Source: RMDB library OK2TST, as collected in RNAgym. This 177-nucleotide RNA was probed chemically with 2A3 and DMS. For 2A3 the reverse transcriptase was SuperScript II with manganese. For DMS, 9,759 sequencing reads were counted. The RNA was probed in 150 mM KOAc, 10 mM MgCl2 and 150 mM bicine (pH 8.5) at 24 C.

RNA sequence: GGGAACGACUCGAGUAGAGUCGAAAAAAAACCUCUUUUGUGCUGCAAGUGCUGUUACGAUCAUGUUAUGGCAACUGAUCAUAAAUAUGUCCUGAGUGUUUCACCAUAUGUGUGUAAUUCGCCAGGACCUCGUAAUAAUGUUCGCAUUAUUACGAGGAAAAGAAACAACAACAACAAC
Reactivity to 2A3 in 0.01 (KOAc 150mM, MgCl2 10mM, bicine 150mM(pH8.5), 24C), signal-to-noise 6, nucleotides 027 to 126: a000a000a000a000c040c000u070c020u040u050u020u030g030u030g020c040u020g050c030a040a050g010u010g030c030u030g040u080u050a040c050g040a110u150c070a070u270g020u030u040a050u080g110g000c020a050a030c040u010g020a040u040c000a010u080a050a070a020u220a110u160g040u000c000c000u050g010a060g090u020g030u010u020u030c010a010c010c030a110u100a120u300g150u010g010u010g000u050a020a080u040u040c010g000c030c000a000g010g020a010
Reactivity to DMS in 0.01 (KOAc 150mM, MgCl2 10mM, bicine 150mM(pH8.5), 24C), signal-to-noise 6, nucleotides 027 to 126: a070a030a070a060c030c020u000c120u000u000u010u010g030u000g010c080u000g010c080a090a050g020u000g010c020u000g010u000u000a050c060g010a070u010c100a060u010g010u010u000a050u010g010g010c130a030a030c030u000g000a040u000c020a060u000a030a050a050u010a070u010g010u000c000c000u000g000a130g020u000g010u000u000u000c010a020c010c050a220u020a100u010g000u010g020u000g010u010a030a030u000u000c020g010c050c010a010g000g010a050